[RMDB]
RNA sequence: GGGAACGACUCGAGUAGAGUCGAAAACGGUAUUGGUCAAGGCUAUACUGACAGCGCACCUUCAAAAGGGCGCUUAAUCCCCGGCCAAGCGCCGAAAUAUGAAUAGACACCGCUGGGCUGGUAGGGCAAAACAUGGCGAUCUUCGGAUCGCCAUGAAGCUCAAAUAACUGUUCGCAGUUAUUUGAGCAAAAGAAACAACAACAACAAC
Reactivity to DMS in 0.01 (KOAc 150mM, MgCl2 10mM, bicine 150mM(pH8.5), 24C), signal-to-noise 1, nucleotides 027 to 156: c040g040g000u010a040u010u010g010g020u010c020a110a100g040g070c040u010a030u020a080c100u000g040a190c070a070g010c030g010c000a080c010c010u020u000c200a170a130a140a080g040g000g010c010g040c000u000u000a090a160u000c010c030c010c000g020g040c050c000a090a040g020c040g010c010c070g000a040a130a070u010a200u010g040a150a270u000a140g010a210c040a040c040c010g020c000u000g000g010g000c020u000g010g010u010a000g040g010g030c100a000a040a020a190c000a010u000g010g010c000g000a040u000c010u000u000c300g010g000a030u000c030g010c000c000a000u000g000a040a110
Reactivity to 2A3 in 0.01 (KOAc 150mM, MgCl2 10mM, bicine 150mM(pH8.5), 24C), signal-to-noise 2, nucleotides 027 to 156: c030g000g040u030a030u070u270g000g020u050c050a070a090g050g020c030u010a020u050a080c050u070g070a050c030a020g000c030g010c070a300c050c030u060u070c080a120a110a050a010g000g000g000c000g000c010u000u000a010a000u020c000c000c000c000g010g000c000c000a070a010g030c040g010c030c020g100a100a100a000u250a070u110g110a070a050u100a140g020a030c020a020c030c000g050c020u020g030g010g000c000u000g070g000u070a030g000g060g040c040a000a000a150a000c000a020u000g000g010c000g030a000u000c000u010u000c030g070g000a000u000c000g010c000c000a000u000g000a000a000